Conditions: 150 mM KOAc, 10 mM MgCl2 and 150 mM bicine (pH 8.5), 24 C. An RNA of 177 nucleotides, treated with DMS and 2A3 and read out base by base. High DMS reactivity at an A or C suggests that its Watson-Crick edge is free. It was measured as part of the RMDB library TTRDEL.

RNA sequence: GGGAACGACUCGAGUAGAGUCGAAAAGAUAUGGACUAUCCUGGAGCUCGAAGAACUCGGAAACGAGGGAGAGCCACAGGAGUAGUCCUAAGUCAAAGUGAGAUUCUGGUUCGCCAGAAUCUCACAAGAACCACAAUCAGUUCGCUGAUUGUGGUUCAAAAGAAACAACAACAACAAC
Reactivity to DMS in 0.01 (KOAc 150mM, MgCl2 10mM, bicine 150mM(pH8.5), 24C), signal-to-noise 2, nucleotides 027 to 126: g010a050u020a300u020g000g000a020c000u000a010u000c000c020u000g000g010a300g000c000u000c000g000a120a220g000a080a200c000u000c000g020g020a120a130a140c000g000a000g000g000g000a080g000a010g010c000c290a050c010a000g010g010a020g010u010a000g000u000c000c000u010a000a050g010u010c050a060a050a200g000u000g000a000g000a010u000u000c000u000g010g000u000u010c240g010c010c000a000g000a000a000u000c000u000c000a000c000a050a050
Reactivity to 2A3 in 0.01 (KOAc 150mM, MgCl2 10mM, bicine 150mM(pH8.5), 24C), signal-to-noise 1, nucleotides 027 to 126: g030a020u100a050u090g010g000a000c010u010a000u000c010c000u010g000g020a030g020c010u000c010g170a300a100g020a080a050c010u000c000g000g030a040a070a070c010g000a010g000g020g060a050g040a000g000c000c010a020c020a000g000g020a020g030u020a000g000u010c000c010u010a140a020g080u010c060a100a030a060g010u000g010a010g000a020u000u010c000u020g000g040u040u160c200g050c060c000a000g000a000a000u020c000u010c000a000c010a010a000